[RMDB]
RNA sequence: GGGAACGACUCGAGUAGAGUCGAAAAGCUCUGCGAGACAGAUCGAACAACAAAGAGAGAUCGAAAAUCUUAGAGGAGAGAACGAAUCUGUCGCCUUCACUAGGACAUUGUCGAUCAGAGGUCCAAAGUCCAUUCAUGGGUUCGCCUAUGGAUGGACAAAAGAAACAACAACAACAAC
Reactivity to 2A3 in 0.01 (KOAc 150mM, MgCl2 10mM, bicine 150mM(pH8.5), 24C), signal-to-noise 9, nucleotides 027 to 126: g030c000u000c000u000g010c020g010a030g000a010c010a010g010a020u010c010g030a060a050c030a050a010c020a020a280a010g090a010g010a000g000a020u010c010g060a040a030a010a030u000c000u010u010a010g010a020g030g010a010g000a000g010a070a030c040g010a030a090u100c030u080g110u030c010g020c000c000u010u010c000a010c020u010a000g000g000a000c020a100u080u160g030u010c010g000a010u040c010a000g010a010g030g030u000c010c000a050a030a010
Reactivity to DMS in 0.01 (KOAc 150mM, MgCl2 10mM, bicine 150mM(pH8.5), 24C), signal-to-noise 9, nucleotides 027 to 126: g010c010u000c010u000g000c020g000a270g000a030c020a050g000a010u000c010g010a300a230c060a070a100c250a060a110a100g000a050g000a300g000a020u000c020g000a070a070a110a170u000c000u000u000a010g000a100g000g000a030g000a130g010a100a110c030g000a060a120u050c030u040g000u000c010g010c030c000u010u000c020a070c010u000a010g000g000a020c100a100u020u010g010u000c010g000a210u000c000a020g000a050g000g010u020c020c020a070a090a090
Conditions: 150 mM KOAc, 10 mM MgCl2 and 150 mM bicine (pH 8.5), 24 C.
An RNA of 177 nucleotides, treated with 2A3 and DMS and read out base by base.
It was measured as part of the RMDB library OK1LIB.